[RMDB]
RNA sequence: GGGAACGACUCGAGUAGAGUCGAAAACUAUAGCACUUCGGUGCUAUAGAAAAGAAAGCUCCAAAAGGAGCAAACGACUGCAAGAAAAUCUGUCGAAAUGCAAAACCUUUCCCUUCGGGGAAAGGAACUGUAGUUUAUUGUUCGCAAUAAACUACAGAAAAGAAACAACAACAACAAC
Reactivity to 2A3 in 0.01 (KOAc 150mM, MgCl2 10mM, bicine 150mM(pH8.5), 24C), signal-to-noise 2, nucleotides 027 to 126: c000u000a000u000a010g000c010a000c000u020u050c270g120g000u000g000c000u000a000u000a000g000a000a010a010a000g060a030a090a000g000c000u000c000c000a120a220a100a300g010g000a010g010c000a060a020a020c040g040a000c030u070g040c160a200a070g100a190a240a050a060u070c060u020g020u010c020g010a110a060a060u110g000c010a010a040a040a200c000c000u000u000u010c000c000c000u020u070c250g040g000g000g000a000a000a010g020g010a000a000
Reactivity to DMS in 0.01 (KOAc 150mM, MgCl2 10mM, bicine 150mM(pH8.5), 24C), signal-to-noise 1, nucleotides 027 to 126: c000u000a010u000a080g010c000a000c000u000u040c210g050g030u000g030c010u000a000u000a000g010a040a050a060a230g000a130a240a160g010c010u000c010c000a070a050a190a140g010g010a010g000c000a030a120a170c130g050a010c010u000g000c290a080a110g030a210a100a190a110u000c010u000g000u000c040g000a070a170a020u000g000c210a060a070a110a130c030c010u000u000u010c000c000c010u010u010c200g030g030g000g000a000a000a000g000g000a000a020
Record summary
Conditions: 150 mM KOAc, 10 mM MgCl2 and 150 mM bicine (pH 8.5), 24 C. An RNA of 177 nucleotides, treated with 2A3 and DMS and read out base by base. For 2A3, 1,728 sequencing reads were counted. It was measured as part of the RMDB library M2PK50.